[RMDB]
RNA sequence: GGGAACGACUCGAGUAGAGUCGAAAAUGAAAGUAGUCUCGUGCAGCGUCUGGGGUUUCCGUUGCAGUCCUCGGAACCAGGACCUCGGCGUGGCCUAGCGAGUUAUGGCGACGAAGGCCGUGAAAAAGGAUUGAUUAGUGUUCGCACUAAUCAAUCCAAAAGAAACAACAACAACAAC
Reactivity to DMS in 0.01 (KOAc 150mM, MgCl2 10mM, bicine 150mM(pH8.5), 24C), signal-to-noise 2, nucleotides 027 to 126: u000g010a110a080a110g000u020a070g020u010c010u000c050g000u020g030c030a120g030c030g000u000c030u000g020g000g000g000u010u000u000c000c050g010u010u000g010c100a100g010u000c070c070u000c130g000g000a030a070c110c100a140g000g000a040c040c040u010c030g020g000c000g000u010g000g010c010c240u020a110g010c030g000a060g020u010u010a020u020g000g000c010g020a120c070g000a080a100g000g000c010c000g020u010g020a020a040a080a140a070
Reactivity to 2A3 in 0.01 (KOAc 150mM, MgCl2 10mM, bicine 150mM(pH8.5), 24C), signal-to-noise 1, nucleotides 027 to 126: u170g040a050a030a070g050u100a040g060u030c020u010c060g050u090g020c070a060g060c020g020u000c050u230g030g020g000g030u030u020u030c010c000g070u050u040g030c080a050g140u100c000c000u010c060g080g020a050a050c060c010a050g040g020a030c000c040u010c000g020g010c010g000u020g010g080c010c010u030a020g040c030g010a000g010u000u080a110u110g030g000c030g010a070c050g040a130a010g100g000c030c040g010u120g030a060a010a050a000a000
Annotation:
The record gives the reactivity of an RNA of 177 nucleotides to DMS and 2A3. The 2A3 profile rests on 1,339 reads. For 2A3 the reverse transcriptase was SuperScript II with manganese. DMS adducts were read by reverse transcription with MarathonRT. The RNA was probed in 150 mM KOAc, 10 mM MgCl2 and 150 mM bicine (pH 8.5) at 24 C. For DMS, 1,581 sequencing reads were counted.